Chemical mapping of a 177-nucleotide RNA with 2A3 and DMS. Values are in units of 0.01, from 0 to 300, in steps of 10. Reactivities are given for positions 27 through 126. Conditions: 150 mM KOAc, 10 mM MgCl2 and 150 mM bicine (pH 8.5), 24 C.

[RMDB]
RNA sequence: GGGAACGACUCGAGUAGAGUCGAAAAUAUUCAAUGUGCGACAGGAAGAAUAAGGCGUAGUCGUCAUCCGUUGCUAAUGCCCCACCUUUUUGCUAUUCAUCUGAAAAACCAGCACAAUCGUUGCUGGUUUCAAAACAAGCUUCGGCUUGUUUUGAAAAAAAGAAACAACAACAACAAC
Reactivity to 2A3 in 0.01 (KOAc 150mM, MgCl2 10mM, bicine 150mM(pH8.5), 24C), signal-to-noise 6, nucleotides 027 to 126: u190a030u040u140c040a020a070u070g020u040g050c020g020a010c030a140g050g060a050a090g040a070a120u140a170a050g030g000c030g020u030a050g060u120c030g030u020c030a080u030c000c030g030u040u050g000c000u070a080a040u100g030c000c020c000c010a050c020c030u050u090u050u080u110g030c020u050a070u080u100c050a100u030c070u110g050a030a010a030a050a050c000c000a010g030c010a000c020a030a300u260c180g110u130u010g000c000u000g000g000
Reactivity to DMS in 0.01 (KOAc 150mM, MgCl2 10mM, bicine 150mM(pH8.5), 24C), signal-to-noise 6, nucleotides 027 to 126: u040a080u020u010c070a060a060u030g010u010g000c040g010a050c050a060g020g010a080a070g010a070a100u010a090a090g010g000c020g010u000a100g010u020c050g020u010c070a070u010c070c040g010u010u020g000c050u010a050a090u000g020c030c020c010c070a090c080c030u000u000u000u020u010g010c040u000a080u000u000c040a060u020c090u010g020a040a060a050a060a040c000c000a000g010c010a020c030a140a100u050c200g020u020u010g020c000u000g000g000